An RNA of 207 nucleotides, treated with 2A3 and read out base by base. Reactivities are given for positions 27 through 156. The 2A3 profile rests on 753 reads.
RNA sequence: GGGAACGACUCGAGUAGAGUCGAAAAUCUGAGCUCGAGAUGAAGCACAGAAGGCUAAAACAAUGAGGGACAGCGUUCCAGUAGCCCUGCCACAGCUCUCUCAUCCUCUGGUCCGCCCUCACUCAAGAUGGCUACCAGCAAGAAUGGUGCAAUGGCACCACCAGCCUGGAUUCGUCCAGGCUGGUGGAAAAGAAACAACAACAACAAC
Reactivity to 2A3 in 0.01 (KOAc 150mM, MgCl2 10mM, bicine 150mM(pH8.5), 24C), signal-to-noise 2, nucleotides 027 to 156: u090c000u100g020a010g020c020u000c060g090a060g040a130u190g020a090a030g000c080a010c070a110g090a050a020g060g040c060u110a060a020a100a080c080a130a170u160g030a120g030g000g010a030c030a070g050c010g040u080u100c010c000a050g010u080a000g090c070c000c020u020g000c000c000a050c070a110g000c000u020c000u000c000u000c080a050u020c040c030u020c020u030g000g060u110c100c040g000c000c000c000u020c050a120c030u240c000a000a160g010a070u040g010g000c000u020a020c000c030a000g010c020a030a100g080a070a010u080g010g050u050g000c120a110a100u140g030g040c010a000